[RMDB]
Conditions: 150 mM KOAc, 10 mM MgCl2 and 150 mM bicine (pH 8.5), 24 C. Structure probing data (2A3) for a 207-nucleotide construct. Source: RMDB library OK3TST, as collected in RNAgym.

RNA sequence: GGGAACGACUCGAGUAGAGUCGAAAAUGGCACCCCUUUGCAUGUGCUAGGAUGUGUCUCGUCUUAUCCAUCAGAACUAGCCUGUCAUAUAGUAGGAUAAGUAGGCUAUAUGAUUUUAUUGUAUUUAGUAGAAAGCAAUGAUAAUAUUUUAAAUUAAGACACGGUGUACAUUCGUGUACACCGUGUCAAAAGAAACAACAACAACAAC
Reactivity to 2A3 in 0.01 (KOAc 150mM, MgCl2 10mM, bicine 150mM(pH8.5), 24C), signal-to-noise 1, nucleotides 027 to 156: u100g040g030c030a020c050c010c020c030u170u260u090g010c090a080u180g140u180g050c000u020a010g000g000a040u040g050u000g000u080c030u000c040g080u000c000u020u010a010u020c010c010a000u000c040a000g050a110a050c000u020a040g000c000c000u000g010u040c010a000u020a000u000a000g020u010a000g020g030a040u050a110a030g010u040a020g000g020c000u000a000u000a000u000g000a030u000u000u020u170a080u000u040g010u020a180u070u030u050a160g010u000a010g150a090a050a010g010c010a000a050u020g010a010u080a170a040u160a250u110u140u050u170a170a240a130u120u160a000a060